[RMDB]
RNA sequence: GGGAACGACUCGAGUAGAGUCGAAAAAGGUUGGACCGCGGUCGCUACGCUGUUGAACGACUACCUCGAAGCGGUGGGUCGCCCGGUACCCGGACCGGAAUCCGAAGCCGGGCCGAUGUUCGCCCGCCUCAUAAUCGGUUUUCGAACCGAUUAUGAGAAAAGAAACAACAACAACAAC
Reactivity to 2A3 in 0.01 (KOAc 150mM, MgCl2 10mM, bicine 150mM(pH8.5), 24C), signal-to-noise 2, nucleotides 027 to 126: a010g060g000u050u040g020g010a020c000c040g010c020g040g000u110c080g040c090u070a070c020g020c030u050g020u130u090g060a070a040c010g020a010c040u100a100c010c040u040c040g070a110a020g040c010g030g040u060g000g010g030u020c020g020c010c000c000g020g020u040a080c000c030c020g010g030a030c040c050g070g120a070a050u030c040c010g010a050a010g020c000c000g030g000g010c020c000g010a000u020g050u060u030c020g020c020c000c010g020c010
Reactivity to DMS in 0.01 (KOAc 150mM, MgCl2 10mM, bicine 150mM(pH8.5), 24C), signal-to-noise 4, nucleotides 027 to 126: a060g010g020u010u000g000g000a080c040c050g010c060g010g010u000c080g000c070u000a070c070g010c060u010g020u010u000g020a080a140c040g010a050c030u010a110c090c010u010c080g000a070a080g010c040g010g020u000g010g000g000u010c060g010c030c010c000g010g000u000a090c170c140c030g010g030a050c080c110g000g010a120a300u010c010c010g020a050a170g010c040c010g000g000g000c040c020g000a040u010g000u000u000c060g020c020c000c020g030c130